About this RNA:
An RNA of 207 nucleotides, treated with 2A3 and DMS and read out base by base.
RNA sequence: GGGAACGACUCGAGUAGAGUCGAAAAGUAUCCCUAGAUGAUAAAACACCGCACAUGGCUCGUAAGAGCGGUUAAAUUAGCAAGUAAUGCAAAUUACGCGAGGUAACGCAUUGCCUAGGCUCGUUAGAAAAGGGAGAAUCCUUCGGGAUUCUCCCAACGUUGAGAUACUCUUCGGAGUAUCUCAACGAAAAGAAACAACAACAACAAC
Reactivity to 2A3 in 0.01 (KOAc 150mM, MgCl2 10mM, bicine 150mM(pH8.5), 24C), signal-to-noise 1, nucleotides 027 to 156: g120u040a090u040c020c020c000u000a090g050a140u160g020a020u090a050a110a030a010c050a050c000c000g090c000a040c020a170u090g070g000c020u060c090g060u040a080a050g010a030g040c000g000g000u020u020a040a140a100u120u060a000g050c050a120a000g020u050a040a010u000g000c050a000a090a240u130u030a020c040g030c070g090a040g010g160u030a040a000c050g010c050a000u000u030g010c000c040u020a000g000g050c000u000c020g030u070u060a070g070a080a160a040a060g000g000g000a000g000a000a000u000c000c000u020u030c100g020g000g000a000u000u000c000u000c000c000c000a000a000
Reactivity to DMS in 0.01 (KOAc 150mM, MgCl2 10mM, bicine 150mM(pH8.5), 24C), signal-to-noise 1, nucleotides 027 to 156: g020u020a080u000c000c000c010u010a160g000a110u000g000a160u000a020a140a180a120c060a100c000c050g050c080a170c090a150u000g000g040c040u000c010g030u000a090a170g010a090g050c030g000g000u000u010a050a110a160u000u010a020g030c030a140a070g010u000a020a040u030g000c040a110a040a080u000u000a040c050g000c020g030a220g000g010u000a050a070c110g060c010a040u000u000g010c010c000u000a220g050g000c000u000c010g000u000u000a100g010a170a060a090a190g000g000g030a030g010a060a020u000c000c060u000u000c300g060g050g010a030u000u000c000u000c000c010c010a000a000
Background
It was measured as part of the RMDB library M2RFPK. For 2A3, 580 sequencing reads were counted.